[RMDB]
An RNA of 177 nucleotides, treated with 2A3 and DMS and read out base by base. The reactions ran in a buffer of 150 mM KOAc, 10 mM MgCl2 and 150 mM bicine (pH 8.5), at 24 C. 2A3 is a SHAPE reagent: it acylates the 2'-hydroxyl of flexible nucleotides of all four kinds. The data come from the RNA Mapping Database (RMDB), library OK2TRN. The DMS profile rests on 4,352 reads. DMS adducts were read by reverse transcription with MarathonRT. For 2A3 the reverse transcriptase was SuperScript II with manganese.
RNA sequence: GGGAACGACUCGAGUAGAGUCGAAAACGAAGUCGGGAUCACAAUGUAUGGUCUGAUCAAUUGGGCACCUGAUGCAAGAGAGAACAGACUAGGGUACCAUUACGGGACUUCCAAGGCAGAAGGUAAACCUACGUUAGGGAUUCGUCCCUAACGUAGGAAAAGAAACAACAACAACAAC
Reactivity to 2A3 in 0.01 (KOAc 150mM, MgCl2 10mM, bicine 150mM(pH8.5), 24C), signal-to-noise 3, nucleotides 027 to 126: c030g030a040a020g040u080c040g000g050g020a030u070c060a020c020a160a210u190g060u120a070u120g120g000u010c010u010g000a050u080c060a070a110u100u080g000g050g000c060a030c020c080u070g030a100u070g040c050a070a010g040a020g000a000g000a110a010c000a010g060a000c000u030a040g030g040g000u050a040c030c000a010u040u080a040c090g010g050g010a020c030u040u000c020c020a030a020g070g000c030a010g010a090a020g070g000u100a070a060a040
Reactivity to DMS in 0.01 (KOAc 150mM, MgCl2 10mM, bicine 150mM(pH8.5), 24C), signal-to-noise 5, nucleotides 027 to 126: c160g000a030a060g020u010c030g020g010g010a120u010c040a070c120a110a080u000g000u000a110u000g010g000u000c000u000g010a060u000c050a050a180u010u000g010g010g020c020a030c060c110u010g000a130u000g010c010a030a140g000a100g000a200g010a020a080c030a020g010a050c030u000a140g000g010g010u000a060c080c030a080u010u000a110c170g010g010g000a050c040u000u000c020c060a100a090g010g010c060a090g000a090a050g010g010u000a050a090a150